[RMDB]
RNA sequence: GGGAACGACUCGAGUAGAGUCGAAAAAGUUUAGAUUUCGAUCUAAACUAGACCACUAAGAGGAUGACGAGUGACUACGACGCAUCUAGUACAAUGCGCCCAGCUGUGAGCAGUUCGCUGCUCACAAACCCAAGAUAGGCUUCGGCCUAUCUUGGGUAAAAGAAACAACAACAACAAC
Reactivity to DMS in 0.01 (KOAc 150mM, MgCl2 10mM, bicine 150mM(pH8.5), 24C), signal-to-noise 1, nucleotides 027 to 126: a010g010u000u000u000a000g000a010u000u000u000c150g020a020u000c000u000a000a010a020c000u000a080g000a230c010c010a120c130u020a130a080g010a060g000g000a020u000g010a090c100g000a120g010u000g010a040c140u020a100c160g020a060c080g000c020a000u000c010u000a100g010u020a110c200a060a020u000g010c050g000c010c000c060a080g020c090u020g000u000g010a020g000c000a020g010u000u000c190g000c000u000g000c000u000c000a000c020a020a090
Reactivity to 2A3 in 0.01 (KOAc 150mM, MgCl2 10mM, bicine 150mM(pH8.5), 24C), signal-to-noise 1, nucleotides 027 to 126: a000g000u030u000u000a030g000a000u010u090u210c220g070a000u020c010u000a010a000a000c000u000a010g020a060c030c020a010c060u080a070a060g080a060g170g040a050u050g040a050c070g010a010g100u050g050a070c070u090a050c160g070a040c010g010c030a000u000c020u040a040g040u010a060c050a080a080u050g040c040g020c040c040c050a030g000c070u040g000u010g000a010g000c010a000g000u000u070c130g030c080u010g000c000u050c020a010c000a000a000

Structure probing data (DMS and 2A3) for a 177-nucleotide construct. The RNA was probed in 150 mM KOAc, 10 mM MgCl2 and 150 mM bicine (pH 8.5) at 24 C. 2A3 is a SHAPE reagent: it acylates the 2'-hydroxyl of flexible nucleotides of all four kinds.